[RMDB]
RNA sequence: GGGAACGACUCGAGUAGAGUCGAAAAGGGGUGCCUCGAGGUGCGGGACGCCGACCCCGGAGGCCUCCUUUGAGUCGAUGGGGCGGCUUCAUUAAGCGGCGCUAACAAGGCGAACAAAUGCAGGGCCCUUGCAGCAACUGUUCGCAGUUGCUGCAAGAAAAGAAACAACAACAACAAC
Reactivity to 2A3 in 0.01 (KOAc 150mM, MgCl2 10mM, bicine 150mM(pH8.5), 24C), signal-to-noise 1, nucleotides 027 to 126: g020g000g000g000u240g050c020c030u040c090g010a110g000g110u140g140c000g030g010g040a000c050g000c050c000g120a300c010c000c000c020g000g000a020g000g090c000c000u020c080c000u020u060u120g010a010g030u030c010g010a010u070g000g000g000g000c000g000g000c000u070u060c010a060u070u080a130a040g090c030g130g000c050g000c070u040a010a010c000a060a080g020g010c060g050a070a050c090a040a030a020u150g000c030a030g000g000g000c000c000
Reactivity to DMS in 0.01 (KOAc 150mM, MgCl2 10mM, bicine 150mM(pH8.5), 24C), signal-to-noise 2, nucleotides 027 to 126: g000g000g000g010u010g010c000c000u020c020g020a190g000g000u000g020c000g000g000g010a100c280g000c020c000g030a070c020c040c000c000g040g000a300g000g000c010c000u000c100c040u000u000u030g020a120g020u000c000g010a300u000g070g000g010g000c060g000g000c010u000u000c030a060u010u000a080a110g000c110g000g030c090g040c060u010a060a170c240a110a140g020g000c000g000a140a040c110a030a100a030u000g000c020a110g050g000g020c000c030
About this RNA
This 177-nucleotide RNA was probed chemically with 2A3 and DMS. For 2A3, 550 sequencing reads were counted. The data come from the RNA Mapping Database (RMDB), library RFM100.